The record gives the reactivity of an RNA of 177 nucleotides to DMS and 2A3. 2A3 adducts were read by reverse transcription with SuperScript II with manganese. For DMS the reverse transcriptase was MarathonRT. The data come from the RNA Mapping Database (RMDB), libraries RFM100 and RFMREP. Conditions: 150 mM KOAc, 10 mM MgCl2 and 150 mM bicine (pH 8.5), 24 C.
RNA sequence: GGGAACGACUCGAGUAGAGUCGAAAAAGGGAACCACGAGAUAAAUGUAAGUUAAAAUUCUGGUCCACGAUGAUCCGCAGAAAUGCGGGUAUAACUGAUACGUGCCGUACGAGUAGCCCAAAACGUGCCUCACAAUUGAGUUCGCUCAAUUGUGAGGAAAAGAAACAACAACAACAAC
Reactivity to DMS in 0.01 (KOAc 150mM, MgCl2 10mM, bicine 150mM(pH8.5), 24C), signal-to-noise 2, nucleotides 027 to 126: a030g000g020g000a070a050c020c000a100c100g000a040g010a110u020a020a070a050u010g000u020a080a040g020u010u000a030a080a040a050u030u000c030u030g020g000u020c040c010a020c070g000a080u000g000a050u000c000c000g000c040a030g010a130a050a150u010g010c010g000g000g000u020a010u000a040a220c080u020g000a110u000a010c080g000u000g030c020c030g000u010a070c120g010a040g000u000a080g000c000c010c030a070a060a010a070c120g010u030g010
Reactivity to 2A3 in 0.01 (KOAc 150mM, MgCl2 10mM, bicine 150mM(pH8.5), 24C), signal-to-noise 4, nucleotides 027 to 126: a000g050g010g020a080a050c010c000a040c100g050a040g020a040u120a070a130a020u160g090u190a090a140g050u060u200a000a030a050a120u130u030c010u030g010g010u020c000c020a000c050g000a000u130g010a010u000c010c000g000c010a000g040a020a020a010u010g000c000g000g020g000u000a000u040a000a020c030u020g030a040u040a140c030g010u040g030c010c000g020u020a020c010g010a040g060u030a000g020c010c000c000a000a030a000a010c060g070u150g070